About this RNA: Structure probing data (2A3 and DMS) for a 207-nucleotide construct. For DMS the reverse transcriptase was MarathonRT. The data come from the RNA Mapping Database (RMDB), library M2RFOK. Reactivities are given for positions 27 through 156.
[RMDB]
RNA sequence: GGGAACGACUCGAGUAGAGUCGAAAAAGCACGGUUUUUGAGGACGCAUUCUGUCCGUGCGGUAAUGCCCUCCUUUACACUUUCUCGCAUGGUGCGGGAGUGUGGAGAGGAAACAAAAGCUAGUCUCGAUAGGCGGUUAACUUCGGUUAACCGCCAACAAUCCGGGUAAGUUCGCUUACCCGGAUUGAAAAGAAACAACAACAACAAC
Reactivity to 2A3 in 0.01 (KOAc 150mM, MgCl2 10mM, bicine 150mM(pH8.5), 24C), signal-to-noise 3, nucleotides 027 to 156: a000g020c010a010c020g000g020u040u040u040u070u140g080a060g010g050a020c060g030c180a170u060u040c030u060g000u000c000c020g000u010g000c020g010g040u160a110a040u130g050c000c000c000u010c010c010u020u040u030a000c000a010c000u080u140u040c010u010c000g030c020a080u240g300g020u300g150c010g000g000g000a010g000u020g000u010g000g000a030g000a000g010g020a030a090a000c030a010a040a000a000g020c030u050a000g030u010c000u000c060g060a090u070a100g020g000c000g000g000u010u000a010a000c000u040u040c040g000g020u020u000a000a000c000c010g000c000c020a000a010
Reactivity to DMS in 0.01 (KOAc 150mM, MgCl2 10mM, bicine 150mM(pH8.5), 24C), signal-to-noise 2, nucleotides 027 to 156: a100g010c010a050c060g010g010u000u000u000u000u000g000a100g030g020a050c040g000c120a150u000u010c060u000g000u000c000c010g010u000g000c030g030g020u000a050a090u000g000c000c020c010u010c050c010u000u010u010a040c010a010c010u010u010u000c000u000c040g030c040a300u020g050g040u000g020c020g010g000g020a030g000u000g020u010g000g000a040g040a120g030g010a070a020a040c020a030a080a100a090g010c050u000a160g000u000c010u000c040g020a210u010a150g040g020c010g030g000u010u000a020a010c010u000u010c290g080g000u000u000a010a010c010c000g010c020c000a000a020